[RMDB]
RNA sequence: GGGAACGACUCGAGUAGAGUCGAAAACAUACGGACUUCGGUCCGUAUGAAAGAACCUCUAAUUGACGCAAACUUCCGCGUCAUCGCGAGGAAGCGAGGAAAAAAUCGAGGUGUUCGCACCUCGAAACGCUUACACACACUUCGGUGUGUGUAAGCGAAAAGAAACAACAACAACAAC
Reactivity to 2A3 in 0.01 (KOAc 150mM, MgCl2 10mM, bicine 150mM(pH8.5), 24C), signal-to-noise 1, nucleotides 027 to 126: c000a000u010a010c030g030g000a000c010u040u030c160g080g000u000c000c000g000u010a010u020g000a000a000a010g060a050a070c000c000u000c030u060a120a120u070u040g010a010c010g010c010a040a120a220c160u260u070c160c060g000c000g000u020c000a020u010c010g000c070g000a020g070g080a040a040g070c020g030a130g070g030a110a000a000a050a000a050u040c010g000a010g000g000u010g020u020u060c230g000c030a000c000c010u000c000g010a000a020a000
Reactivity to DMS in 0.01 (KOAc 150mM, MgCl2 10mM, bicine 150mM(pH8.5), 24C), signal-to-noise 1, nucleotides 027 to 126: c000a000u020a020c000g000g020a010c000u010u000c140g010g020u000c000c000g000u000a000u000g000a000a070a100g000a110a050c030c000u000c140u000a100a220u000u000g030a000c010g000c020a020a150a160c300u000u000c140c200g000c000g010u000c000a020u000c020g000c120g000a040g000g040a110a070g000c070g060a130g000g000a000a030a170a020a070a030u000c010g060a000g010g070u020g000u000u030c190g020c000a030c000c020u000c000g000a010a020a060
Structure probing data (2A3 and DMS) for a 177-nucleotide construct. Conditions: 150 mM KOAc, 10 mM MgCl2 and 150 mM bicine (pH 8.5), 24 C.